Chemical mapping of a 177-nucleotide RNA with 2A3 and DMS. 2A3 adducts were read by reverse transcription with SuperScript II with manganese.
[RMDB]
RNA sequence: GGGAACGACUCGAGUAGAGUCGAAAAGAUAUGGAGACCCUUCAAGCGACGAUCAUGAGUGUCGGAAACGACACCAUGGGAGCUUGAGGGUCUCCUAAGUCAAAAGUGACUAGUUCGCUAGUCACAAUCUAAUGUUCUAGUUCGCUAGAACAUUAGAAAAAGAAACAACAACAACAAC
Reactivity to 2A3 in 0.01 (KOAc 150mM, MgCl2 10mM, bicine 150mM(pH8.5), 24C), signal-to-noise 6, nucleotides 027 to 126: g010a010u040a020u110g000g000a010g010a010c020c020c000u130u260c100a020a010g000c000g300a300c010g010a110u020c000a000u010g070a030g300u000g000u000c010g000g000a030a050a010c000g000a000c000a000c000c000a000u010g000g000g000a010g000c000u000u000g010a010g000g000g000u000c000u010c000c000u000a000a000g000u000c000a020a010a020a110g010u010g000a000c000u000a000g060u070u100c300g020c150u000a000g010u000c000a000c000a010a020
Reactivity to DMS in 0.01 (KOAc 150mM, MgCl2 10mM, bicine 150mM(pH8.5), 24C), signal-to-noise 9, nucleotides 027 to 126: g010a040u010a300u010g000g010a020g010a020c000c000c010u000u010c040a010a010g020c010g000a060c280g000a040u010c010a010u000g000a180g030u000g010u000c000g000g000a060a070a170c000g010a010c000a000c000c000a000u000g000g000g000a030g020c000u000u000g000a030g000g000g000u000c000u000c000c000u000a010a060g010u010c030a090a080a120a160g010u000g000a010c000u000a010g010u000u010c290g020c000u000a000g010u000c000a000c010a100a090